[RMDB]
The data come from the RNA Mapping Database (RMDB), library OK2TRN. The record gives the reactivity of an RNA of 177 nucleotides to 2A3 and DMS. The reactions ran in a buffer of 150 mM KOAc, 10 mM MgCl2 and 150 mM bicine (pH 8.5), at 24 C. For 2A3 the reverse transcriptase was SuperScript II with manganese.

RNA sequence: GGGAACGACUCGAGUAGAGUCGAAAAGUCAGAUUUUGCAGUUGCAGGCCAUUGUUUUGUGACCAGAAGACCGCAGAGCAGAGAACACCGAUACUGUCGCUGCGUUUGCUCUGGCAGCUAUCGUACAUGUAGCUUUUCAAUUCGUUGAAAAGCUACAAAAAGAAACAACAACAACAAC
Reactivity to 2A3 in 0.01 (KOAc 150mM, MgCl2 10mM, bicine 150mM(pH8.5), 24C), signal-to-noise 1, nucleotides 027 to 126: g160u100c040a030g020a110u080u130u080u170g000c010a010g050u070u030g070c020a040g020g000c040c020a000u050u040g100u070u110u120u080g070u060g090a160c010c000a030g000a190a000g030a100c020c020g000c010a000g000a030g010c000a010g030a010g050a110a000c070a030c020c040g010a020u070a130c020u020g040u040c060g000c120u020g010c000g050u080u130u140g020c020u010c000u010g000g000c000a010g000c000u040a040u120c050g060u070a020c020a100
Reactivity to DMS in 0.01 (KOAc 150mM, MgCl2 10mM, bicine 150mM(pH8.5), 24C), signal-to-noise 3, nucleotides 027 to 126: g000u000c040a080g010a110u000u000u000u000g010c030a040g020u000u000g030c120a090g020g040c040c040a060u000u000g010u000u010u000u000g020u000g010a150c000c020a050g000a080a230g010a080c130c060g000c020a010g000a190g000c030a050g020a150g000a060a090c030a080c180c070g010a090u010a040c060u010g010u000c050g020c050u000g010c000g000u000u000u000g010c070u000c010u010g000g000c040a050g000c150u010a050u000c090g010u010a080c210a130